Structure probing data (2A3 and DMS) for a 177-nucleotide construct. The data come from the RNA Mapping Database (RMDB), library OK2TST. For 2A3 the reverse transcriptase was SuperScript II with manganese. The RNA was probed in 150 mM KOAc, 10 mM MgCl2 and 150 mM bicine (pH 8.5) at 24 C. DMS adducts were read by reverse transcription with MarathonRT. For 2A3, 44,536 sequencing reads were counted. High 2A3 reactivity points to a flexible backbone, as in loops and unpaired stretches. Values cover nucleotides 27 to 126.
RNA sequence: GGGAACGACUCGAGUAGAGUCGAAAAUGACUUUGACUAUGUCAAAGCUAGAGUCGAAGACGAAGGGUUAUCGUUUUUGACGAUAACUCUCCCUUCCUUCUGUCGUGACUUCGAGAGAAGUCUCGCACAGAAUGGGUACAUUCGUGUACCCAUUCUGAAAAGAAACAACAACAACAAC
Reactivity to 2A3 in 0.01 (KOAc 150mM, MgCl2 10mM, bicine 150mM(pH8.5), 24C), signal-to-noise 9, nucleotides 027 to 126: u110g050a040c000u010u010u020g030a050c070u170a160u300g030u030c020a030a020a010g020c030u060a030g000a000g080u040c040g050a090a020g060a060c080g060a070a020g020g000g010u000u000a020u010c030g020u000u010u020u080u300g080a000c000g000a000u000a010a000c000u000c010u010c010c000c000u020u070c050c010u100u120c060u100g200u210c020g020u020g010a010c000u000u000c020g060a080g000a000g000a050a000g000u000c010u020c010g010c000a040
Reactivity to DMS in 0.01 (KOAc 150mM, MgCl2 10mM, bicine 150mM(pH8.5), 24C), signal-to-noise 9, nucleotides 027 to 126: u010g000a060c010u000u000u000g010a020c010u010a150u010g010u000c020a020a020a030g010c020u000a080g000a050g010u000c030g000a090a220g010a120c190g000a060a020g000g000g000u000u000a010u000c000g010u000u000u010u000u020g010a020c000g000a010u000a000a010c010u000c010u000c010c010c210u000u000c020c030u000u000c120u010g010u010c020g010u000g000a010c000u000u000c000g010a270g000a230g000a010a010g000u000c000u000c010g020c150a220